[RMDB]
RNA sequence: GGGAACGACUCGAGUAGAGUCGAAAAGAGGGAUCUACCGAUGGGUUCGGUCGCGGGACUCGUCGGGACACCAACCGCGACUGGGAUCGUCAUCCUGGCUAGUUCGCGUGAUCAGGAGAUCCGAGUAGAGGCAUAGCGAACUACGCACGGAGAAGCCGUGAGAAUGUGAGUUCGCUCACAUUCUCACAAAAGAAACAACAACAACAAC
Reactivity to DMS in 0.01 (KOAc 150mM, MgCl2 10mM, bicine 150mM(pH8.5), 24C), signal-to-noise 2, nucleotides 027 to 156: g000a130g020g020g000a150u000c060u000a070c010c010g020a040u000g020g030g040u000u000c030g010g000u000c080g040c070g050g000g000a040c020u020c020g030u000c040g010g010g020a060c000a110c090c080a070a130c040c040g020c010g030a040c020u000g000g050g000a030u010c060g000u030c050a150u000c010c010u000g020g020c020u000a060g030u000u000c050g000c000g010u000g000a120u000c010a080g040g010a210g010a060u000c020c030g000a180g040u000a060g010a080g030g010c040a050u000a110g000c020g000a040a050c050u000a070c110g000c020a100c040g030g000a160g020a110a080g000c080c100
Reactivity to 2A3 in 0.01 (KOAc 150mM, MgCl2 10mM, bicine 150mM(pH8.5), 24C), signal-to-noise 5, nucleotides 027 to 156: g150a030g040g060g040a100u040c070u140a050c020c010g000a010u030g010g000g030u030u020c050g040g000u000c010g000c000g020g000g010a010c010u010c020g020u010c010g000g010g020a010c010a010c010c040a090a040c030c010g000c000g000a000c020u030g030g010g020a020u040c020g050u030c040a040u010c000c010u020g000g000c010u030a040g020u010u010c020g000c000g020u020g010a070u020c030a020g030g020a040g010a020u000c030c020g000a010g020u300a020g020a030g020g010c070a090u120a080g000c010g010a010a000c010u030a040c070g020c050a030c060g050g030a080g020a090a020g090c100c080

Chemical mapping of a 207-nucleotide RNA with DMS and 2A3. For DMS the reverse transcriptase was MarathonRT. The RNA was probed in 150 mM KOAc, 10 mM MgCl2 and 150 mM bicine (pH 8.5) at 24 C. The 2A3 profile rests on 6,311 reads. It was measured as part of the RMDB library ARCHII.